[RMDB]
This 177-nucleotide RNA was probed chemically with DMS and 2A3.
RNA sequence: GGGAACGACUCGAGUAGAGUCGAAAAAGGUGUAAACAAGCUCCAGAACUUUAGGGCCCAGUCAUCAGGAGAAAGGCCAAGUUUGAGCUAUGCACAGCUCAGUUUUGAUGACCGGAGAGUGAUGACACCAUUCUUGGAGUUUCGACUCCAAGAAUGGAAAAGAAACAACAACAACAAC
Reactivity to DMS in 0.01 (KOAc 150mM, MgCl2 10mM, bicine 150mM(pH8.5), 24C), signal-to-noise 3, nucleotides 027 to 126: a060g000g010u000g010u000a050a060a130c120a080a100g020c020u000c000c070a150g000a090a040c040u000u000u010a110g000g000g000c030c000c050a120g010u000c020a030u000c040a050g000g030a130g000a030a100a060g000g020c020c020a040a020g020u000u000u010g000a010g000c000u000a080u010g010c280a090c160a030g000c000u000c020a030g000u000u000u000u010g010a050u000g010a020c020c010g000g000a080g020a240g010u000g000a030u000g000a060c070a270
Reactivity to 2A3 in 0.01 (KOAc 150mM, MgCl2 10mM, bicine 150mM(pH8.5), 24C), signal-to-noise 2, nucleotides 027 to 126: a030g110g000u080g020u060a120a150a050c080a020a110g010c010u020c030c030a060g040a120a090c030u080u180u180a100g080g040g000c010c000c000a030g020u020c020a050u000c010a010g080g000a040g040a130a040a020g010g000c020c000a010a030g000u010u080u050g000a000g000c000u040a120u300g140c110a030c040a090g000c000u000c000a010g010u030u040u090u080g110a120u100g060a080c000c000g000g000a060g000a000g050u060g010a040u060g010a020c030a010
Record summary
The RNA was probed in 150 mM KOAc, 10 mM MgCl2 and 150 mM bicine (pH 8.5) at 24 C.